[RMDB]
RNA sequence: GGGAACGACUCGAGUAGAGUCGAAAAACGGGUCGUUUCGACGACCCGUAAAAUGCCGAACUCAGAAGUGAAACGGCGUAGCGCCGAUGGUAGUGUGGGGUCAAAUGGCAUCGUUCGCGAUGCCAAACCCCCAAGAUACGUUCGCGUAUCUUGGGGGAAAAGAAACAACAACAACAAC
Reactivity to DMS in 0.01 (KOAc 150mM, MgCl2 10mM, bicine 150mM(pH8.5), 24C), signal-to-noise 2, nucleotides 027 to 126: a010c020g000g000g000u000c000g010u000u000u020c120g010a040c030g020a020c000c000c010g030u000a000a040a050a070u000g000c030c000g030a080a130c140u000c050a070g010a140a150g000u010g000a060a080a160c020g010g030c020g020u000a040g000c070g000c030c020g020a050u000g020g020u000a050g020u010g010u000g030g000g000g030u010c070a100a050a180u000g000g000c010a000u000c000g000u000u000c160g020c010g020a000u000g010c000c000a020a050a080